[RMDB]
RNA sequence: GGGAACGACUCGAGUAGAGUCGAAAAGAUAUGGAGAUGUGAAGACAUGAAUAGUCGGAAACGACAGGUUCAACAGCUUCCCAUCUCCUAAGUCAAAUCGAAGUCUCACUUCGGUGAGACUUCGAAACAAAGAUGUGUUGUUCGCAACACAUCUUUGAAAAGAAACAACAACAACAAC
Reactivity to 2A3 in 0.01 (KOAc 150mM, MgCl2 10mM, bicine 150mM(pH8.5), 24C), signal-to-noise 2, nucleotides 027 to 126: g010a000u040a020u120g010g000a000g000a000u020g000u000g020a010a010g040a080c070a150u040g000a020a010u020a030g010u020c000g030g040a020a050a000c010g010a000c010a010g300g070u000u030c030a070a070c050a240g120c000u000u000c010c000c000a010u020c010u000c000c000u010a020a010g020u010c020a040a020a140u040c000g010a010a000g020u010c000u020c000a000c010u060u170c300g090g000u000g000a000g000a020c000u000u000c000g020a000a010a000
Reactivity to DMS in 0.01 (KOAc 150mM, MgCl2 10mM, bicine 150mM(pH8.5), 24C), signal-to-noise 4, nucleotides 027 to 126: g000a040u000a280u010g000g000a020g030a010u000g020u010g010a020a000g010a150c140a230u000g000a000a010u010a060g020u000c010g010g000a070a060a150c020g010a010c000a050g020g010u000u010c000a020a080c240a150g010c000u000u000c000c040c000a000u000c000u000c010c020u000a020a060g000u000c040a100a090a110u000c010g010a020a000g010u010c010u000c010a000c000u000u020c210g030g000u000g010a020g000a010c000u000u000c010g000a000a040a140